RNA sequence: GGGAACGACUCGAGUAGAGUCGAAAAGAUAUGGAUGUUAAACGGAGCUGUGUUCGGAAACGAACAUACAGCGCGAAACGUUCCACAUCCUAAGUCAAACUGUAGGCCUCUUCGGAGGCCUACAGAACCAAUCAACUCUGUUCGCAGAGUUGAUUGGAAAAGAAACAACAACAACAAC
Reactivity to DMS in 0.01 (KOAc 150mM, MgCl2 10mM, bicine 150mM(pH8.5), 24C), signal-to-noise 2, nucleotides 027 to 126: g000a030u000a010u000g000g010a020u010g030u000u000a110a010a020c000g010g020a100g020c000u000g020u000g000u000u000c000g010g000a000a010a030c000g010a010a000c020a060u000a060c010a020g010c020g030c260g020a080a050a100c010g000u000u000c080c180a010c000a020u000c000c000u010a000a150g000u000c000a110a160a240c010u000g010u000a020g000g010c010c010u000c000u000u010c270g030g000a010g010g020c020c000u000a010c000a000g010a080a210
Reactivity to 2A3 in 0.01 (KOAc 150mM, MgCl2 10mM, bicine 150mM(pH8.5), 24C), signal-to-noise 1, nucleotides 027 to 126: g010a010u020a000u050g000g010a020u020g000u060u130a010a120a030c040g120g050a130g050c000u010g000u000g000u020u000c000g000g000a010a010a010c000g000a030a000c030a000u300a030c020a000g010c000g000c070g130a170a290a020c010g000u040u020c040c010a010c000a000u000c000c000u000a010a010g000u010c050a130a170a130c030u000g000u000a000g000g000c020c000u070c070u050u190c300g080g010a010g000g000c000c000u010a020c000a000g000a000a000